[RMDB]
RNA sequence: GGGAACGACUCGAGUAGAGUCGAAAAGCUCCAGCAGCCCCCCCGCGAGCCGCAGAAGCCGCGCCAGGGGCUCGAUGUCCACCCGAAACAUGUCGGCGUACGUGUCGGCCGCGGCCCCGAAGGCCGCGAUACGCCCGUCAUUCGUGACGGGCGUAUCAAAAGAAACAACAACAACAAC
Reactivity to DMS in 0.01 (KOAc 150mM, MgCl2 10mM, bicine 150mM(pH8.5), 24C), signal-to-noise 1, nucleotides 027 to 126: g050c030u000c020c030a130g000c230a170g000c000c000c000c000c210c300c000g020c000g000a030g000c000c010g000c300a000g000a110a300g010c040c060g090c030g020c140c200a190g000g040g000g010c000u000c000g010a000u010g000u100c000c000a300c040c000c000g050a080a040a080c060a030u020g000u010c040g020g000c100g010u040a010c130g000u020g050u000c010g050g000c050c200g020c000g040g030c000c050c000c160g020a110a080g000g060c000c030g020c080
Reactivity to 2A3 in 0.01 (KOAc 150mM, MgCl2 10mM, bicine 150mM(pH8.5), 24C), signal-to-noise 1, nucleotides 027 to 126: g020c030u100c100c030a050g000c030a020g030c080c000c010c000c000c000c000g040c010g040a040g010c010c040g020c050a030g070a300a030g030c000c000g030c010g030c110c110a080g000g020g000g030c000u000c020g040a050u110g050u000c030c000a030c030c050c000g060a000a120a070c080a100u150g020u020c020g000g120c040g060u140a080c030g030u130g040u090c010g020g030c020c030g000c000g000g060c020c010c000c050g060a050a000g010g000c000c000g000c000
Record summary
This 177-nucleotide RNA was probed chemically with DMS and 2A3. For 2A3 the reverse transcriptase was SuperScript II with manganese. For 2A3, 1,019 sequencing reads were counted. The RNA was probed in 150 mM KOAc, 10 mM MgCl2 and 150 mM bicine (pH 8.5) at 24 C.